[RMDB]
This 207-nucleotide RNA was probed chemically with DMS and 2A3.
RNA sequence: GGGAACGACUCGAGUAGAGUCGAAAACUUUACAUGGACCUAUUUUCCUUAUAAUAACCUAAGGAGGUAGGUACUGGCAUCUCAUUUUACAAAUGAUAAAACAGAGGCAAAAAAGCUAAAUAGCUUAUCCACAGCAUAGAAGAUGACAAAGGUGGGAAAGUACAUGAACGUUCGCGUUCAUGUACUUAAAAGAAACAACAACAACAAC
Reactivity to DMS in 0.01 (KOAc 150mM, MgCl2 10mM, bicine 150mM(pH8.5), 24C), signal-to-noise 1, nucleotides 027 to 156: c030u010u000u010a050c090a270u000g010g000a030c020c030u000a010u000u000u000u000c000c030u010u000a100u000a100a150u010a160a100c160c170u000a010a000g040g010a000g000g000u000a000g030g010u020a010c050u000g010g030c040a100u000c080u030c020a180u000u000u010u010a030c080a170a090a090u000g000a240u000a060a010a070a080c050a070g080a180g030g000c040a010a010a130a030a060a030g000c010u000a010a070a090u010a050g000c040u020u000a090u010c070c060a120c040a070g020c060a160u000a080g000a050a050g000a120u010g000a060c030a070a070a000g040g000u020g040g000g050a130
Reactivity to 2A3 in 0.01 (KOAc 150mM, MgCl2 10mM, bicine 150mM(pH8.5), 24C), signal-to-noise 3, nucleotides 027 to 156: c000u180u260u190a070c020a120u120g040g030a010c000c010u000a070u010u090u150u090c030c000u080u060a100u010a270a190u180a250a150c020c010u010a030a000g000g000a010g000g000u020a000g000g000u030a090c020u010g020g000c010a070u020c010u000c040a030u000u050u020u070a060c040a020a150a040u070g060a080u080a060a060a010a000c050a030g030a010g040g010c020a120a090a020a000a020a030g000c030u070a090a090a160u090a120g000c000u030u060a050u090c030c000a020c010a010g050c010a040u050a040g060a060a020g060a050u100g000a030c050a080a060a040g080g030u050g020g040g010a130
The DMS profile rests on 1,549 reads. Conditions: 150 mM KOAc, 10 mM MgCl2 and 150 mM bicine (pH 8.5), 24 C.